[RMDB]
RNA sequence: GGGAACGACUCGAGUAGAGUCGAAAAAUGGAGAGAGAUGAUAAAGGUUCUCAGUUGCAUUAAAACUAAACACAAUAUAGGCAGCUGCUGUGAGCUAGACUAUUAUAGUUUUAUCCCGAUAUAUAAAUAAGAUUUAGAUUUUCGAAUCUAAAUCUUAAAAAGAAACAACAACAACAAC
Reactivity to DMS in 0.01 (KOAc 150mM, MgCl2 10mM, bicine 150mM(pH8.5), 24C), signal-to-noise 3, nucleotides 027 to 126: a070u020g010g010a090g000a110g000a030g000a060u010g000a100u010a060a100a150g010g010u010u010c010u000c010a060g000u000u000g010c050a010u010u000a050a030a060a060c060u020a040a090a120c150a080c140a080a080u040a040u000a050g010g010c060a010g000c040u000g020c140u020g000u010g000a030g000c030u000a060g010a060c010u000a020u000u000a110u000a060g010u000u010u010u000a050u020c010c010c000g000a100u060a130u060a150u030a070a060a170
Reactivity to 2A3 in 0.01 (KOAc 150mM, MgCl2 10mM, bicine 150mM(pH8.5), 24C), signal-to-noise 2, nucleotides 027 to 126: a000u030g030g000a070g010a010g020a010g000a090u090g030a010u230a170a210a040g090g020u090u030c020u020c020a040g010u100u150g060c010a030u090u030a080a090a000a010c030u110a000a250a000c030a010c030a100a140u110a030u060a140g080g000c010a010g000c040u010g070c100u100g060u090g030a000g000c000u040a020g010a080c000u000a080u190u110a110u050a100g000u000u000u060u100a050u020c000c000c000g010a010u050a000u000a010u030a300a060a110